[RMDB]
RNA sequence: GGGAACGACUCGAGUAGAGUCGAAAAGAUAUGGAAGGGCUCUUGGAUUUAUGGGUGGGCUCGGAAACGAGCCGUAACAUCCCAUUGUCAGAGCUCUUCCUAAGUCAAAGCCACCUUCGGGUGGCAACAACUUAUCUCACUUCGGUGAGAUAAGUUGAAAAGAAACAACAACAACAAC
Reactivity to DMS in 0.01 (KOAc 150mM, MgCl2 10mM, bicine 150mM(pH8.5), 24C), signal-to-noise 2, nucleotides 027 to 126: g000a020u000a300u010g000g010a010a000g000g000g000c000u000c000u000u000g020g000a040u000u000u000a000u000g000g010g030u000g030g010g010c000u000c000g010g000a060a080a230c010g010a010g000c000c000g020u000a010a050c130a040u020c000c010c000a020u000u000g000u000c010a020g010a000g000c010u000c000u000u000c000c000u010a020a050g000u000c020a120a100a140g000c000c000a000c000c010u000u010c210g010g030g010u000g010g000c010a010a040
Reactivity to 2A3 in 0.01 (KOAc 150mM, MgCl2 10mM, bicine 150mM(pH8.5), 24C), signal-to-noise 1, nucleotides 027 to 126: g000a010u060a020u150g000g010a010a030g000g000g030c030u030c070u200u190g260g040a110u260u300u190a020u070g000g010g000u000g000g020g000c020u000c010g000g020a020a040a000c010g000a000g000c010c020g000u000a010a020c010a300u190c000c010c010a010u020u040g020u010c010a020g010a000g000c000u000c010u000u000c010c000u000a000a000g000u010c000a000a010a060g000c000c000a000c010c000u020u070c270g120g010g000u000g000g000c000a000a010